This 207-nucleotide RNA was probed chemically with 2A3. The 2A3 profile rests on 311 reads. High 2A3 reactivity points to a flexible backbone, as in loops and unpaired stretches. Source: RMDB library OK3TST, as collected in RNAgym. 2A3 adducts were read by reverse transcription with SuperScript II with manganese.

RNA sequence: GGGAACGACUCGAGUAGAGUCGAAAAUACUGGAAAAACUCGGUGUUAUCAACAAAGAGUCAGACACACUUGACCAGACCGCCGCCAGAACUCAUACCGCCACGUAUGGUACCGGUGACUAUAUUCCGGCGACCAGCUCUUAUGCAGGCUAUCAGGCCCCGUAAUUACCCUUCGGGGUAAUUACGGGAAAAGAAACAACAACAACAAC
Reactivity to 2A3 in 0.01 (KOAc 150mM, MgCl2 10mM, bicine 150mM(pH8.5), 24C), signal-to-noise 1, nucleotides 027 to 156: u090a010c010u120g000g030a160a070a000a100a060c070u070c060g040g000u020g090u160u150a170u160c060a050a050c010a060a180a000g110a060g000u040c020a050g090a040c020a000c010a000c150u110u120g000a060c010c010a100g040a020c000c050g000c000c000g120c000c020a100g000a040a060c000u050c200a060u060a090c000c150g020c020c020a070c060g030u200a150u150g000g090u070a060c000c000g110g000u070g050a110c150u070a070u000a000u300u050c050c010g150g000c100g060a070c010c010a010g000c010u050c050u260u030a040u180g020c030a010g040g000c000u020a050u140c050a020g110g000c130